[RMDB]
RNA sequence: GGGAACGACUCGAGUAGAGUCGAAAAAAAAUCACGUGAAAUAAUCAGAGGAAUCGUUUGAAAUCAUCGUAGUAAUCGCGCGAAAAUCGCGUGAAAUAAUCAGAGGAAUCGUUUGAAAUCAUCGUAGUAGUACUUUCUAGUUCGCUAGAAAGUACUAAAAAGAAACAACAACAACAAC
Reactivity to DMS in 0.01 (KOAc 150mM, MgCl2 10mM, bicine 150mM(pH8.5), 24C), signal-to-noise 5, nucleotides 027 to 126: a060a040a070a110u020c070a050c030g020u000g010a050a090a060u010a100a060u010c020a040g010a020g000g000a060a040u010c040g010u010u010u000g000a030a090a050u030c110a060u010c140g000u020a070g010u010a090a130u000c020g020c000g010c010g010a110a060a110a100u020c010g030c000g040u000g010a000a050a060u020a090a060u000c030a020g000a040g010g010a070a030u000c030g010u010u020u000g000a050a070a080u010c050a030u020c060g000u000a070g010
Reactivity to 2A3 in 0.01 (KOAc 150mM, MgCl2 10mM, bicine 150mM(pH8.5), 24C), signal-to-noise 5, nucleotides 027 to 126: a000a000a000a020u090c030a000c030g030u020g020a050a020a060u150a040a030u130c070a050g020a010g050g040a040a050u040c030g080u050u090u150g050a060a040a010u070c050a020u070c070g040u010a030g010u040a120a110u020c010g000c000g000c000g090a120a080a020a180u200c010g000c000g010u000g000a000a010a000u090a010a010u040c040a030g000a010g070g010a040a030u040c020g050u020u050u120g050a070a040a020u030c010a000u090c020g030u010a070g030